[RMDB]
RNA sequence: GGGAACGACUCGAGUAGAGUCGAAAACCCCAAUGAUGAAACCUUCACAUGUCCGACCAGCUGCCUGUUGCCAGAGCCUGAAAAGGUGAACCCACUGGCUCAACAGCUGGAGAGGAAGGAUGACUUGCGAUACUUCAAGGUUCGCCUUGAAGUAUCGAAAAGAAACAACAACAACAAC
Reactivity to 2A3 in 0.01 (KOAc 150mM, MgCl2 10mM, bicine 150mM(pH8.5), 24C), signal-to-noise 1, nucleotides 027 to 126: c010c000c000c020a080a120u210g080a070u140g060a120a000a070c020c010u060u030c010a060c000a250u210g120u030c010c040g040a090c040c000a010g000c000u000g030c040c080u050g000u140u050g020c000c020a020g020a030g030c000c000u040g020a010a000a020a020g070g000u050g040a110a090c070c020c030a030c060u000g000g000c000u010c010a020a020c010a000g000c020u010g010g000a020g060a010g030g000a010a010g050g020a070u090g050a010c050u050u100g000
Reactivity to DMS in 0.01 (KOAc 150mM, MgCl2 10mM, bicine 150mM(pH8.5), 24C), signal-to-noise 1, nucleotides 027 to 126: c060c000c000c270a090a150u010g000a060u000g010a140a200a150c020c020u000u000c020a100c140a150u000g030u020c160c040g000a300c010c020a020g000c000u000g000c070c070u000g040u000u000g000c000c000a000g010a220g000c020c000u000g000a040a090a100a010g020g050u000g020a060a180c080c040c100a230c000u000g010g000c010u000c040a020a120c020a040g000c000u030g000g010a090g000a120g010g020a070a010g010g000a060u000g000a200c130u000u000g000

Chemical mapping of a 177-nucleotide RNA with 2A3 and DMS.
The reactions ran in a buffer of 150 mM KOAc, 10 mM MgCl2 and 150 mM bicine (pH 8.5), at 24 C.